[RMDB]
RNA sequence: GGGAACGACUCGAGUAGAGUCGAAAAUCAAACAUUUUCAGCUCAAUAGCGAUGAAAGAGAUGCGUCGUCGAAAUCUACCGUUGCGUUCAUUUUCAAUUGGGCUAGACGCAAAUUCACCAGAUGUGAGAUGCGUAUGGAUUUCGAUCCAUACGCAUCAAAAGAAACAACAACAACAAC
Reactivity to 2A3 in 0.01 (KOAc 150mM, MgCl2 10mM, bicine 150mM(pH8.5), 24C), signal-to-noise 7, nucleotides 027 to 126: u120c040a040a050a070c070a040u040u060u090u130c030a030g000c000u020c050a100a160u070a160g040c030g090a060u090g090a070a080a100g120a030g050a030u110g030c010g030u010c000g000u020c030g070a100a070a100u030c030u050a070c020c040g070u050u040g010c020g030u040u050c050a100u020u020u060u100c090a090a100u060u060g000g000g010c000u030a040g040a060c040g000c050a020a050a040u120u090c050a080c090c060a070g070a160u090g050u010g050a080
Reactivity to DMS in 0.01 (KOAc 150mM, MgCl2 10mM, bicine 150mM(pH8.5), 24C), signal-to-noise 3, nucleotides 027 to 126: u010c060a150a110a100c150a150u010u030u010u010c030a130g030c000u010c080a050a050u020a050g020c190g000a070u030g020a040a020a090g000a120g010a050u000g000c050g000u000c080g000u020c050g000a120a030a060u020c090u010a090c020c010g020u000u010g030c050g000u010u010c030a100u010u000u000u010c070a020a030u000u000g010g000g000c020u030a020g010a120c090g010c080a010a080a080u010u000c040a140c030c070a120g010a070u030g000u010g000a050
About this RNA
The data come from the RNA Mapping Database (RMDB), library OK1LIB. The record gives the reactivity of an RNA of 177 nucleotides to 2A3 and DMS. Reactivities are given for positions 27 through 126.